[RMDB]
RNA sequence: GGGAACGACUCGAGUAGAGUCGAAAAGAUAUGGAUCACCGGAUUGGCACAGGAGGAAUUCCACUUUCGGAAACGAAAGUGGAAUUCUACCCACCCUGUGAACUACCAAGAAGGUGAUCCUAAGUCAUCCAUUACUGUACUUCGGUACAGUAAUGGAAAAAGAAACAACAACAACAAC
Reactivity to DMS in 0.01 (KOAc 150mM, MgCl2 10mM, bicine 150mM(pH8.5), 24C), signal-to-noise 3, nucleotides 027 to 126: g000a080u010a270u000g000g000a010u000c000a000c000c000g000g010a300u000u000g000g000c010a010c000a020g000g000a150g000g010a030a020u000u000c000c000a000c000u000u000u000c000g030g000a080a080a110c010g000a020a000a000g050u000g000g000a000a000u000u000c010u000a020c140c130c100a300c180c000c000u000g000u000g000a100a040c060u000a300c030c000a020a010g010a300a260g010g000u000g000a010u000c000c000u000a000a040g000u000c030a190

This 177-nucleotide RNA was probed chemically with DMS.
The reactions ran in a buffer of 150 mM KOAc, 10 mM MgCl2 and 150 mM bicine (pH 8.5), at 24 C.
For DMS, 1,454 sequencing reads were counted.